[RMDB]
RNA sequence: GGGAACGACUCGAGUAGAGUCGAAAAUACUGUUCACAGACUAAAUGAUGACGGGUUGUAAAUGCGGACGAGCAUUUGCAGCUCAAGAUAUAGUCGGGCUCGUUCUAGGGCGAGAGAUGAUGAUAUGCCUUUCGCAUGUGAUUCACCGUUCCGUAGGGCUUGAUUAUUACUUCGGUAAUAAUCAAGCAAAAGAAACAACAACAACAAC
Reactivity to 2A3 in 0.01 (KOAc 150mM, MgCl2 10mM, bicine 150mM(pH8.5), 24C), signal-to-noise 3, nucleotides 027 to 156: u090a030c030u050g040u110u150c060a040c020a100g030a010c020u040a030a100a100u190g080a060u080g040a070c100g000g000g000u000u000g000u000a000a000a000u000g010c010g040g140a080c070g090a100g010c000a000u000u000u010g000c000a000g020c000u000c000a010a020g000a000u070a000u000a050g020u000c000g000g040g000c050u010c000g020u040u010c000u060a030g060g000g000c020g000a030g010a010g000a050u070g000a000u020g010a020u020a030u100g050c000c020u100u160u170c070g020c010a000u070g040u060g160a070u060u040c020a020c080c010g050u130u150c010c040g040u120a090g050g050
Reactivity to DMS in 0.01 (KOAc 150mM, MgCl2 10mM, bicine 150mM(pH8.5), 24C), signal-to-noise 3, nucleotides 027 to 156: u010a070c060u000g020u010u010c060a110c040a110g020a100c020u020a030a060a130u010g010a140u000g010a190c170g020g020g020u010u000g030u010a000a020a020u000g030c010g040g040a200c200g010a160g010c030a000u010u000u000g000c000a030g010c000u000c010a020a050g020a140u000a150u000a020g000u000c000g010g000g030c000u000c020g030u010u000c040u000a110g010g030g030c020g020a040g000a090g020a020u000g010a070u000g020a270u010a010u000g050c010c060u000u000u000c070g000c020a010u000g020u000g010a230u010u000c010a020c010c010g010u000u000c020c010g010u000a150g010g010
Conditions: 150 mM KOAc, 10 mM MgCl2 and 150 mM bicine (pH 8.5), 24 C. Structure probing data (2A3 and DMS) for a 207-nucleotide construct. For DMS the reverse transcriptase was MarathonRT. High 2A3 reactivity points to a flexible backbone, as in loops and unpaired stretches. For 2A3, 2,688 sequencing reads were counted. High DMS reactivity at an A or C suggests that its Watson-Crick edge is free. The data come from the RNA Mapping Database (RMDB), library ARCHII.